About this RNA: The data come from the RNA Mapping Database (RMDB), libraries RFM100 and RFMREP. An RNA of 177 nucleotides, treated with 2A3 and DMS and read out base by base. The RNA was probed in 150 mM KOAc, 10 mM MgCl2 and 150 mM bicine (pH 8.5) at 24 C. DMS (dimethyl sulfate) methylates the pairing face of unpaired adenines and cytosines.
[RMDB]
RNA sequence: GGGAACGACUCGAGUAGAGUCGAAAAACUUCGACCGGCUUCGGCUGUAAUGGCUGGAGUCUGGAGCUCGAUAAAGUCGGCGGAAGUUUGUCGUAACAGCGUGGCAACACGGCUGACGAAAGUGCAGCCACGUAAGCCUAUUCGUAGGCUUACGUGGAAAAGAAACAACAACAACAAC
Reactivity to 2A3 in 0.01 (KOAc 150mM, MgCl2 10mM, bicine 150mM(pH8.5), 24C), signal-to-noise 3, nucleotides 027 to 126: a000c010u020u000c010g050a030c000c010g020g000c000u010u000c000g000g020c000u030g090u220a100a110u300g020g000c000u000g020g010a000g000u000c000u000g030g000a030g030c040u030c070g020a040u150a150a100a010g100u030c000g000g000c060g050g020a030a030g030u010u060u070g090u020c010g000u010a020a000c000a020g000c000g020u000g000g010c040a070a020c000a030c020g010g020c010u000g010a000c000g020a060a000a000g140u140g030c050a030g040
Reactivity to DMS in 0.01 (KOAc 150mM, MgCl2 10mM, bicine 150mM(pH8.5), 24C), signal-to-noise 4, nucleotides 027 to 126: a000c030u000u000c000g020a180c000c010g000g010c000u000u000c020g000g000c000u000g020u000a100a070u090g010g000c020u000g010g000a000g000u010c020u040g010g020a120g020c030u010c000g010a090u020a100a080a080g010u000c010g010g010c070g000g010a040a020g000u000u000u010g000u020c000g010u000a070a050c030a020g010c010g030u000g000g000c280a120a210c020a010c060g000g010c000u010g000a120c000g000a040a080a080g010u010g020c130a150g010